Chemical mapping of a 207-nucleotide RNA with 2A3. Conditions: 150 mM KOAc, 10 mM MgCl2 and 150 mM bicine (pH 8.5), 24 C. Values cover nucleotides 27 to 156.
RNA sequence: GGGAACGACUCGAGUAGAGUCGAAAAAGCGUAGCGGUACGCCGCUACGCAAGGCGCAUUUGAACUGUAUUGUACGCCUUGCAUAAAGCAAAAGUACUAAAAUAACGUGCCGUUACGACGGCACGAAAAAACAUCCAUUGGUUCGCCAAUGGAUGAACGGAGUACCUUGGUUCGCCAAGGUACUCCGAAAAGAAACAACAACAACAAC
Reactivity to 2A3 in 0.01 (KOAc 150mM, MgCl2 10mM, bicine 150mM(pH8.5), 24C), signal-to-noise 1, nucleotides 027 to 156: a000g020c000g010u010a000g000c000g000g000u100a070c280g030c040c000g020c000u000a000c000g000c000a010a010g010g000c010g010c030a110u040u020u270g150a190a110c120u070g070u140a070u110u010g030u070a040c010g020c000c000u000u010g000c010a030u050a180a200a060g030c000a010a010a010a010g070u060a020c000u120a010a000a060a210u120a040a030c010g000u000g000c000c000g000u000u020a160c290g000a000c000g020g000c000a000c000g000a000a000a000a000a000a050c000a000u000c000c000a000u000u000g020g010u030u030c170g000c090c000a000a000u000g000g000a000u000g000a000a000